[RMDB]
RNA sequence: GGGAACGACUCGAGUAGAGUCGAAAAGAACUUUGGCCGGCUCGGAAUAGAAUCAGGGGGUGCAAACUGCCCACUGGAAGAAAGGAUUAUAGCAAAUGCGUACCCUAUUGCAAUACAGCCCGGCCAACAUAGACUACUCUAUUCGUAGAGUAGUCAAUAUUACUUCGUAGUUCGCUACGAAGUAAUAAAAAGAAACAACAACAACAAC
Reactivity to 2A3 in 0.01 (KOAc 150mM, MgCl2 10mM, bicine 150mM(pH8.5), 24C), signal-to-noise 5, nucleotides 027 to 156: g040a070a010c020u030u030u020g000g000c000c000g000g040c030u050c080g050g050a090a060u120a110g060a050a060u150c070a080g000g000g020g030g000u060g010c040a090a120a080c070u080g000c010c010c000a040c030u040g040g090a030a040g080a130a150a040g050g020a070u180u110a100u240a120g040c020a040a090a100u130g020c020g020u080a090c010c000c000u050a080u030u080g090c040a050a040u060a160c020a010g010c020c040c000g010g000c000c000a000a000c000a010u060a020g000a000c000u000a000c000u010c000u000a040u070u090c120g080u050a000g000a000g000u000a000g000u010c000a000a000
Reactivity to DMS in 0.01 (KOAc 150mM, MgCl2 10mM, bicine 150mM(pH8.5), 24C), signal-to-noise 3, nucleotides 027 to 156: g010a110a100c050u000u000u000g010g040c010c010g030g030c010u000c060g010g010a160a140u000a090g000a180a120u000c060a030g010g010g000g030g040u000g000c080a080a070a170c160u000g020c040c010c030a120c030u000g010g000a080a110g010a140a170a120g020g010a160u010u000a080u010a100g000c030a050a070a130u000g010c050g000u000a100c030c010c010u000a110u000u000g010c020a090a120u000a090c050a050g000c100c020c040g030g000c020c000a010a010c100a130u010a150g000a010c010u000a020c000u000c000u000a060u000u000c250g020u000a010g010a040g000u000a020g010u000c000a000a030

Background
Structure probing data (2A3 and DMS) for a 207-nucleotide construct. The reactions ran in a buffer of 150 mM KOAc, 10 mM MgCl2 and 150 mM bicine (pH 8.5), at 24 C. 2A3 adducts were read by reverse transcription with SuperScript II with manganese.